[RMDB]
RNA sequence: GGGAACGACUCGAGUAGAGUCGAAAAUGGCUUCUCCUGGGCGAUCGCUCGCUGUUUUUGUGGCUGGCUUGCAGCGGGCUGGAGGAGCCGGGAGCGGAGGCGGAGGACCGAGCCAAAAACGUCAGCCUAUAGAGGAAGCUGUUCGCAGCUUCCUCAAAGCAUUAUCUCUAUUCGUAGAGAUAAUGCUAAAAGAAACAACAACAACAAC
Reactivity to DMS in 0.01 (KOAc 150mM, MgCl2 10mM, bicine 150mM(pH8.5), 24C), signal-to-noise 2, nucleotides 027 to 156: u000g030g000c020u000u000c020u000c000c000u000g040g020g010c050g020a110u010c050g060c010u000c030g030c010u010g020u000u000u010u010u010g020u000g020g040c030u010g010g000c040u000u000g000c020a050g000c020g010g010g000c010u000g000g000a060g020g010a120g040c020c010g000g030g010a070g040c070g000g000a090g010g020c050g010g000a130g010g000a140c040c040g000a090g030c010c040a050a040a040a040a050c080g000u000c030a060g010c010c010u010a150u000a130g010a040g020g010a030a030g020c000u000g030u010u000c250g020c020a020g020c000u000u000c000c000u000c000a000a040
Reactivity to 2A3 in 0.01 (KOAc 150mM, MgCl2 10mM, bicine 150mM(pH8.5), 24C), signal-to-noise 4, nucleotides 027 to 156: u060g010g010c000u010u010c000u020c010c010u090g030g060g030c050g060a070u100c050g000c000u000c010g000c000u000g040u020u130u040u090u120g130u060g030g000c010u000g000g020c000u010u020g010c000a000g010c000g000g010g020c010u000g010g020a020g010g010a000g010c000c000g000g020g010a050g010c050g020g060a060g020g020c090g010g030a060g050g010a010c040c020g010a020g050c030c030a090a030a000a010a010c040g010u020c010a010g000c000c000u100a140u100a090g000a000g000g000a000a000g000c000u010g040u070u120c250g010c120a000g000c000u000u000c010c000u000c000a010a000